[RMDB]
RNA sequence: GGGAACGACUCGAGUAGAGUCGAAAAGUUCAUGAUGUGGCUGAUCUUCUGAAACAGUACUUCCGAGAUCUUCCCGAGCCACUGAUGACUGUUAAGAUGUCGGAGGUUUUCGCAAAUAUUUGCUCGACAUUAUCCACUCCUUCGGGAGUGGAUAAUGAAAAGAAACAACAACAACAAC
Reactivity to DMS in 0.01 (KOAc 150mM, MgCl2 10mM, bicine 150mM(pH8.5), 24C), signal-to-noise 4, nucleotides 027 to 126: g010u000u000c190a050u000g020a060u020g020u000g010g010c010u000g010a040u010c070u010u020c110u010g010a110a070a130c150a130g010u010a120c060u000u000c010c070g000a030g000a030u000c020u000u000c020c010c010g030a040g010c000c000a030c050u010g000a230u000g010a030c020u010g010u000u010a120a070g010a060u010g000u000c010g000g000a070g010g010u000u000u000u000c120g010c080a060a050a120u010a120u000u000u010g010c020u000c080g020a260
Reactivity to 2A3 in 0.01 (KOAc 150mM, MgCl2 10mM, bicine 150mM(pH8.5), 24C), signal-to-noise 3, nucleotides 027 to 126: g050u040u090c050a040u160g210a080u090g020u030g020g000c040u050g030a100u070c080u210u030c050u210g060a110a060a000c040a030g150u120a080c040u010u000c000c000g010a010g020a040u000c000u010u000c040c000c000g040a000g040c010c000a040c020u060g100a030u080g030a020c000u030g030u150u080a110a050g040a040u050g030u070c040g020g000a020g030g000u050u050u130u150c060g020c030a020a120a100u200a230u140u100u140g050c030u020c040g060a040